[RMDB]
RNA sequence: GGGAACGACUCGAGUAGAGUCGAAAAAUUAACGGCAAACCCAUGAUUGUUCAUGUUCUUGAACGCGCGCGUGAAUCAGGUGCCGAGCGCAUCAUCGUGGCAACCGAUCAUGAGGAUGUUGCCCGCACCAGCAGUAAUAUUUCGAUAUUACUGCUGGAAAAGAAACAACAACAACAAC
Reactivity to DMS in 0.01 (KOAc 150mM, MgCl2 10mM, bicine 150mM(pH8.5), 24C), signal-to-noise 9, nucleotides 027 to 126: a090u010u010a080a170c140g000g010c020a030a060a200c020c010c010a040u000g010a050u000u000g010u000u000c070a060u010g010u000u010c120u000u000g010a050a060c080g010c060g020c040g010c030g020u000g010a090a100u010c170a090g010g020u000g020c040c010g010a060g010c060g010c010a060u000c040a050u000c100g000u000g010g000c080a090a110c240c080g000a040u000c010a010u010g000a080g000g000a150u000g000u000u000g010c010c000c040g020c220a130
Reactivity to 2A3 in 0.01 (KOAc 150mM, MgCl2 10mM, bicine 150mM(pH8.5), 24C), signal-to-noise 6, nucleotides 027 to 126: a000u150u080a060a030c030g020g000c010a030a020a040c010c010c000a010u030g020a040u030u100g020u070u060c050a030u060g080u200u130c100u100u090g030a080a030c040g000c010g000c000g010c000g060u070g130a080a110u120c080a110g090g050u040g050c020c020g070a050g010c060g000c010a020u040c010a000u040c020g060u050g050g000c020a050a050c060c060g020a020u010c010a020u050g090a080g070g020a040u070g080u120u040g020c000c000c010g010c010a060